[RMDB]
RNA sequence: GGGAACGACUCGAGUAGAGUCGAAAAUUGAGCUGGUAAUGGCUUUAGAAGAAGAAUUUGAAACUGAAAUUCCAGACGAAGAAGCAGAGAAGAUUACUACUGUUCAGUUGGCAAUUGACUACGUUAAACCCCUACUUGAGUUCGCUCAAGUAGGGGUAAAAGAAACAACAACAACAAC
Reactivity to DMS in 0.01 (KOAc 150mM, MgCl2 10mM, bicine 150mM(pH8.5), 24C), signal-to-noise 2, nucleotides 027 to 126: u000u000g000a060g050c040u000g000g000u010a030a080u010g000g010c040u000u000u010a160g010a140a150g000a110a160g000a050a010u000u000u010g020a130a100a130c210u000g000a020a000a030u000u000c010c040a070g010a110c140g020a140a090g000a060a040g000c010a100g000a050g010a080a110g000a010u000u010a060c100u000a050c090u010g000u000u000c030a030g040u020u010g000g000c110a100a100u000u000g000a090c020u000a070c180g010u000u000a090a050